[RMDB]
RNA sequence: GGGAACGACUCGAGUAGAGUCGAAAAAGGACGGGGGUUAUCCUUUGAGGUAACGACAGGUGCAGGUCCUGAAAUCGUGUGGAGGCAUGAACUUUAGGCGAUGAAAAGGAGAAUAACAGCUAUUUCGUUCUUUUGAACUCAUCAGUAGAGACGCGCACGAACGAAUAAACUUCGGUUUAUUCGUUCGAAAAGAAACAACAACAACAAC
Reactivity to 2A3 in 0.01 (KOAc 150mM, MgCl2 10mM, bicine 150mM(pH8.5), 24C), signal-to-noise 4, nucleotides 027 to 156: a010g050g000a000c020g000g010g050g020g000u000u030a010u040c010c040u090u090u240g120a170g000g030u010a040a020c030g080a050c030a050g060g000u100g060c050a020g000g100u040c000c030u020g020a070a070a010u040c030g000u090g060u070g060g020a020g000g040c080a090u130g030a060a040c000u110u040u060a060g020g010c030g040a040u050g070a080a080a000a060g030g010a050g040a080a050u100a100a030c040a030g030c030u080a120u060u090u060c030g020u010u020c000u060u110u060u090g050a020a020c020u010c080a100u020c050a080g050u100a000g070a000g030a070c030g060c010g000c070a020
Reactivity to DMS in 0.01 (KOAc 150mM, MgCl2 10mM, bicine 150mM(pH8.5), 24C), signal-to-noise 2, nucleotides 027 to 156: a050g030g010a050c020g010g030g040g000g000u010u000a040u000c010c020u070u000u010g010a110g030g020u000a040a040c020g010a140c130a100g020g010u000g080c030a120g000g010u010c040c010u000g030a030a130a080u000c050g070u000g000u000g000g000a060g000g060c010a080u000g010a100a050c080u000u000u000a140g000g010c100g020a170u000g000a030a050a120a080g000g000a100g000a060a110u000a060a040c060a100g020c100u000a080u000u000u010c060g030u000u000c030u020u000u000u000g000a050a080c040u000c040a100u030c040a140g000u000a130g010a120g000a060c050g040c080g000c050a200

Description: Structure probing data (2A3 and DMS) for a 207-nucleotide construct. For 2A3 the reverse transcriptase was SuperScript II with manganese. For 2A3, 2,703 sequencing reads were counted. The data come from the RNA Mapping Database (RMDB), library VIROID.